[RMDB]
RNA sequence: GGGAACGACUCGAGUAGAGUCGAAAACAGCCUCGGGUGCACGUGGGCCCGCGGUCGAGCCCUAAGGCCGGGCGUGGGGCUGGGGUCGCAGGGAGAGUAACCGUGAGCCGGCGCCCAGCCUUCAGGGGUGCCGCAAUAUUUUCGAAUAUUGCGGCACAAAAGAAACAACAACAACAAC
Reactivity to 2A3 in 0.01 (KOAc 150mM, MgCl2 10mM, bicine 150mM(pH8.5), 24C), signal-to-noise 9, nucleotides 027 to 126: c020a010g010c000c000u020c010g010g010g000u140g090c090a080c260g110u220g040g090g000c000c000c000g010c010g000g010u080c070g030a060g060c000c000c000u010a010a010g000g000c000c000g000g010g000c010g000u040g020g300g010g000c020u050g020g020g020g060u060c040g010c100a110g040g120g060a070g020a020g050u050a040a030c020c030g120u090g100a010g010c000c010g010g000c000g000c000c000c000a000g000c000c000u000u010c020a000g000g000g000
Reactivity to DMS in 0.01 (KOAc 150mM, MgCl2 10mM, bicine 150mM(pH8.5), 24C), signal-to-noise 2, nucleotides 027 to 126: c100a240g000c010c000u000c020g010g000g020u000g030c030a100c220g030u010g000g000g020c000c010c000g010c180g020g030u010c080g000a100g030c000c010c000u010a030a040g000g030c030c020g020g010g000c000g020u010g000g030g020g030c020u010g010g000g000g000u000c050g040c030a120g000g020g010a130g010a130g010u010a140a040c030c020g010u000g000a090g020c010c020g010g000c020g000c000c000c000a060g000c000c000u000u000c110a010g000g000g010

An RNA of 177 nucleotides, treated with 2A3 and DMS and read out base by base.